[RMDB]
An RNA of 177 nucleotides, treated with DMS and read out base by base. For DMS, 746 sequencing reads were counted. DMS adducts were read by reverse transcription with MarathonRT. Values cover nucleotides 27 to 126. Conditions: 150 mM KOAc, 10 mM MgCl2 and 150 mM bicine (pH 8.5), 24 C.
RNA sequence: GGGAACGACUCGAGUAGAGUCGAAAAGAUAUGGACGUCGUAGUUGAAGCCUUGGAUUUAUACAACCUAGUAGUCGGAAACGACUAUGAAAUUGUAUUGUCAGGCUUCAACUACACGUCCUAAGUCAGUAUUCUAGUCACUUCGGUGACUAGAAUACAAAAGAAACAACAACAACAAC
Reactivity to DMS in 0.01 (KOAc 150mM, MgCl2 10mM, bicine 150mM(pH8.5), 24C), signal-to-noise 1, nucleotides 027 to 126: g000a040u000a300u000g000g000a020c000g030u000c170g130u000a000g000u000u010g000a020a010g000c030c000u000u060g000g010a000u020u020u020a000u000a010c010a000a000c050c050u000a300g010u000a000g040u000c000g010g000a110a150a300c000g000a010c020u000a000u040g000a190a170a240u000u000g010u000a010u010u000g000u000c000a110g000g010c000u000u000c020a000a000c000u000a000c000a000c000g010u000c000c000u000a000a090g010u000c010a260